[RMDB]
RNA sequence: GGGAACGACUCGAGUAGAGUCGAAAAAGGUCUUCUUUGCCGAGCAGCAUCUGAUAUGGGACCUGUCCGUGUGCUUGGUGGGCUGGAUGCAAUACAUACCGGUCAUGAUCAAUCUCUGGCGGAACUGACAAUGCUGGUGGUUCGCCACCAGCAUUGUAAAAGAAACAACAACAACAAC
Reactivity to DMS in 0.01 (KOAc 150mM, MgCl2 10mM, bicine 150mM(pH8.5), 24C), signal-to-noise 1, nucleotides 027 to 126: a040g020g020u010c020u000u020c100u000u000u000g020c070c050g020a090g010c070a060g000c030a050u000c080u010g030a120u000a050u010g010g000g000a030c080c040u000g000u000c020c030g020u000g020u020g010c070u000u000g030g010u000g020g000g010c020u000g000g010a040u010g000c030a080a090u000a270c070a050u000a070c030c010g000g000u000c050a070u010g010a050u000c030a050a070u010c060u010c030u000g010g010c040g000g010a090a070c110u000g010
Reactivity to 2A3 in 0.01 (KOAc 150mM, MgCl2 10mM, bicine 150mM(pH8.5), 24C), signal-to-noise 1, nucleotides 027 to 126: a000g140g030u030c060u140u080c000u210u180u120g040c050c030g020a010g070c060a010g020c010a060u040c060u100g100a070u040a070u290g020g070g020a010c010c030u000g050u030c000c030g060u110g000u000g040c020u020u060g030g010u050g020g000g100c020u030g020g000a060u030g000c060a060a040u160a280c020a010u060a130c000c010g070g000u010c010a020u180g050a030u080c020a000a030u050c030u030c010u000g040g010c040g030g000a040a050c030u010g000